This 177-nucleotide RNA was probed chemically with 2A3 and DMS. The RNA was probed in 150 mM KOAc, 10 mM MgCl2 and 150 mM bicine (pH 8.5) at 24 C. Source: RMDB library OK1LIB, as collected in RNAgym. For DMS the reverse transcriptase was MarathonRT. In probing experiments dimethyl sulfate is read out at A N1 and C N3, which are open when not base-paired. For DMS, 41,142 sequencing reads were counted. 2A3 adducts were read by reverse transcription with SuperScript II with manganese.
RNA sequence: GGGAACGACUCGAGUAGAGUCGAAAAUGGCGGUCCUUGGCAUAUUGGUUCCUUAUCCGGCCAGAAGGGUGCCUGGCUGUGUCGCAUUUGGCAUGGGGGUGUCCCAUAGCGGGUGGGUGCAUUUUGGCGAUAAAUAAAUUUUCGAAUUUAUUUAUCGAAAAGAAACAACAACAACAAC
Reactivity to 2A3 in 0.01 (KOAc 150mM, MgCl2 10mM, bicine 150mM(pH8.5), 24C), signal-to-noise 7, nucleotides 027 to 126: u100g040g000c020g010g010u060c030c000u030u050g030g000c020a030u050a110u130u130g040g000u040u060c000c000u010u010a050u010c010c000g030g000c020c010a010g050a070a040g050g010g010u030g010c000c000u020g060g000c020u010g010u020g020u060c020g020c130a150u070u060u170g030g000c010a020u020g010g000g010g000g020u040g040u030c010c000c000a010u030a020g020c030g000g010g010u080g010g000g000u030g010c040a070u020u050u030u190g050g020
Reactivity to DMS in 0.01 (KOAc 150mM, MgCl2 10mM, bicine 150mM(pH8.5), 24C), signal-to-noise 8, nucleotides 027 to 126: u030g000g020c030g010g010u010c020c030u010u010g000g010c050a080u030a090u020u020g010g010u000u010c020c020u000u020a100u010c090c120g000g000c020c020a050g010a110a090g010g010g010u020g010c040c010u000g010g000c030u000g020u010g010u010c050g000c160a110u010u030u020g000g010c040a060u010g010g000g010g010g010u020g010u010c010c010c010a060u030a080g010c070g010g000g010u020g010g000g010u000g000c080a080u010u010u010u020g010g010